Description: This 177-nucleotide RNA was probed chemically with 2A3 and DMS. Source: RMDB library M2PK50, as collected in RNAgym. The 2A3 profile rests on 3,839 reads.
[RMDB]
RNA sequence: GGGAACGACUCGAGUAGAGUCGAAAAAGUUUAGAUUUCGAUCUAAACUAGACCACUAUGAGGAUGACGAGUGACUACGACGCAUCUAGUAGAAUGCGCCCAGCUGUGAGCAGUUCGCUGCUCACAACUAUUUUCCUUCCUUCGGGAAGGAAAAUAGAAAAGAAACAACAACAACAAC
Reactivity to 2A3 in 0.01 (KOAc 150mM, MgCl2 10mM, bicine 150mM(pH8.5), 24C), signal-to-noise 4, nucleotides 027 to 126: a000g020u020u000u000a010g000a010u080u070u110c270g060a020u010c010u010a000a010a010c000u000a010g050a030c040c020a010c040u040a030u080g120a170g270g000a010u010g020a040c030g020a020g080u070g140a110c110u100a030c260g140a040c000g010c020a010u000c000u000a010g000u010a010g060a300a090u080g040c030g020c030c000c000a020g050c090u090g000u000g000a000g020c010a000g010u020u130c190g010c090u000g020c000u000c000a000c000a000a000
Reactivity to DMS in 0.01 (KOAc 150mM, MgCl2 10mM, bicine 150mM(pH8.5), 24C), signal-to-noise 4, nucleotides 027 to 126: a020g000u000u010u000a000g000a010u000u000u020c190g010a010u000c000u010a000a000a010c000u000a070g010a190c080c040a100c080u010a060u000g000a100g010g000a030u010g020a080c060g020a250g010u000g010a150c200u000a090c050g010a150c120g000c000a010u000c010u000a280g010u000a040g010a070a040u000g020c060g020c020c000c050a080g010c070u000g010u000g010a010g010c020a010g010u000u010c200g030c000u000g000c000u000c000a000c010a010a060